[RMDB]
RNA sequence: GGGAACGACUCGAGUAGAGUCGAAAAUCACCGAACUGCCGGGCCGCACCAGUGCCUUCCUGGUCGCCCAGGUGCGGGCACGGGUCGACGGUAUCGUGCUGCGUCGCGAAUUCACCGAAGGCACCGACAGUAAAGAGAAGUUCGCUUCUCUUUACUGAAAAGAAACAACAACAACAAC
Reactivity to 2A3 in 0.01 (KOAc 150mM, MgCl2 10mM, bicine 150mM(pH8.5), 24C), signal-to-noise 5, nucleotides 027 to 126: u050c010a020c040c010g010a070a060c040u080g030c020c000g010g010g040c020c020g000c010a010c010c010a020g000u000g030c010c000u030u050c020c020u020g000g050u130c080g100c040c000c010a030g020g010u060g070c120g020g020g000c030a020c010g010g000g030u060c040g020a090c020g010g030u040a110u060c020g010u040g010c060u160g110c070g130u210c000g020c020g030a030a080u160u120c040a060c050c030g030a060a040g030g000c060a100c120c010g030a050
Reactivity to DMS in 0.01 (KOAc 150mM, MgCl2 10mM, bicine 150mM(pH8.5), 24C), signal-to-noise 7, nucleotides 027 to 126: u010c070a140c080c010g010a100a090c090u010g010c050c010g010g000g010c060c030g000c090a040c010c010a090g020u000g000c020c020u000u000c050c020u000g000g000u010c220g020c260c000c010a040g010g010u000g010c150g010g000g010c030a030c010g010g000g000u000c060g010a210c020g010g010u000a050u000c010g020u010g000c020u010g010c160g010u010c010g010c040g010a070a130u010u000c080a070c020c020g000a100a140g000g010c030a080c040c040g000a180